[RMDB]
RNA sequence: GGGAACGACUCGAGUAGAGUCGAAAAGCUUUCGCGUUCGCGCGAAAGCAAAGAUACGUAGUCGUUGGUCACAAAUUACGGACAAUGGCAUAAUUAUAAUAAAAACAGAUAUGUUCGCAUAUCUGAACGUGUAAUCAGAGUUCGCUCUGAUUACACGAAAAGAAACAACAACAACAAC
Reactivity to 2A3 in 0.01 (KOAc 150mM, MgCl2 10mM, bicine 150mM(pH8.5), 24C), signal-to-noise 3, nucleotides 027 to 126: g000c010u000u000u000c030g050c000g020u020u050c220g020c000g000c020g080a000a000a000g000c010a000a010a020g000a020u290a040c090g040u130a060g010u020c010g020u000u040g160g100u020c020a000c040a300a300a140u300u200a140c110g060g010a000c010a010a030u030g000g000c030a040u130a200a050u300u210a190u100a290a180u120a040a100a010a030a000c010a010g010a010u000a000u000g010u050u090c170g000c040a000u010a000u000c000u000g010a040a000
Reactivity to DMS in 0.01 (KOAc 150mM, MgCl2 10mM, bicine 150mM(pH8.5), 24C), signal-to-noise 1, nucleotides 027 to 126: g060c000u000u020u000c000g010c000g030u000u010c140g070c030g070c000g060a000a010a000g030c000a000a000a080g010a050u000a030c190g010u000a050g020u000c010g000u000u010g020g010u000c000a010c130a050a090a250u000u000a090c220g010g020a020c000a020a040u000g020g010c050a090u000a160a060u000u000a060u000a060a120u020a050a040a030a020a170c010a040g000a050u020a010u000g010u000u000c190g000c000a000u000a000u000c010u000g000a050a050

Chemical mapping of a 177-nucleotide RNA with 2A3 and DMS.
The 2A3 profile rests on 1,745 reads.
Conditions: 150 mM KOAc, 10 mM MgCl2 and 150 mM bicine (pH 8.5), 24 C.
For DMS the reverse transcriptase was MarathonRT.